An RNA of 207 nucleotides, treated with 2A3 and read out base by base. Conditions: 150 mM KOAc, 10 mM MgCl2 and 150 mM bicine (pH 8.5), 24 C.
RNA sequence: GGGAACGACUCGAGUAGAGUCGAAAAACGUUCACGAUCGAUCUCGAGAUCACACUCUCUCUCGUGAGUGAUCGAGAGUUCGUACGAACUCGUGUUCGUGUGUGAACGAGUGUACGUGAGUGAGAUCGUGUACUCACUCACACUCUCGAACUCUCUCCCCAAUACUUGGCUUCGGCCAAGUAUUGGGAAAAGAAACAACAACAACAAC
Reactivity to 2A3 in 0.01 (KOAc 150mM, MgCl2 10mM, bicine 150mM(pH8.5), 24C), signal-to-noise 2, nucleotides 027 to 156: a010c020g030u010u000c000a020c020g010a090u090c000g000a030u000c010u010c000g040a030g000a060u030c010a000c000a020c050u080c000u050c000u010c030u040c130g110u080g130a070g010u040g010a010u020c010g000a000g000a000g010u000u020c000g030u080a050c130g040a100a060c060u040c090g130u130g010u040u000c030g020u030g030u000g030u030g060a030a030c010g010a010g010u030g020u030a100c130g010u000g010a020g000u070g020a020g000a120u190c150g070u120g040u140a030c000u010c000a000c000u050c000a000c000a010c000u000c000u020c000g030a080a040c010u000c030u000c030u030c070